Description:
The record gives the reactivity of an RNA of 177 nucleotides to DMS. Source: RMDB library TTRINS, as collected in RNAgym.

RNA sequence: GGGAACGACUCGAGUAGAGUCGAAAAGAUAUGGAGAACUUGUCAGGAAUCAAGUAGCUAAGACAGCCCUCUCGGAAACGAGAGGGUCGAGCUACGGGGAUUCCUUGGAUUUAGUUCUCCUAAGUCAUCAUGGGGGAAGGUUCGCCUUCCCCCAUGAAAAAGAAACAACAACAACAAC
Reactivity to DMS in 0.01 (KOAc 150mM, MgCl2 10mM, bicine 150mM(pH8.5), 24C), signal-to-noise 1, nucleotides 027 to 126: g020a040u000a300u000g000g000a030g030a020a020c000u000u000g010u010c000a030g000g000a050a000u000c000a300a220g000u000a000g000c000u020a230a150g020a060c300a090g000c000c000c030u000c000u010c000g000g000a150a030a160c020g000a050g000a030g020g000g040u000c000g020a000g000c000u000a000c010g000g010g010g050a000u000u000c000c020u000u040g010g020a030u030u020u000a020g020u010u000c000u000c000c020u000a020a060g010u020c030a150